[RMDB]
RNA sequence: GGGAACGACUCGAGUAGAGUCGAAAAACGCUACCUUUCGAGGUAGCGUCACCUACUUCCCGCAACCGUCGAGUCGUUCCCAUGGUUGCGUGAAGUAGUUUGAGUGGCAGACGUUCGCGUCUGCCAAUCGAUGACCUUAGUUCGCUAAGGUCAUCGAAAAAGAAACAACAACAACAAC
Reactivity to DMS in 0.01 (KOAc 150mM, MgCl2 10mM, bicine 150mM(pH8.5), 24C), signal-to-noise 1, nucleotides 027 to 126: a040c000g010c000u000a010c010c000u010u000u000c150g010a020g010g030u000a000g010c000g010u000c040a040c240c010u000a020c010u000u000c000c030c000g010c010a000a000c000c020g000u020c200g000a020g000u000c000g000u000u000c000c010c000a000u000g000g020u000u000g000c000g000u000g000a020a010g010u000a010g000u010u010u010g010a100g030u000g000g000c000a010g000a020c000g060u000u020c220g000c020g030u000c000u000g000c000c000a000a010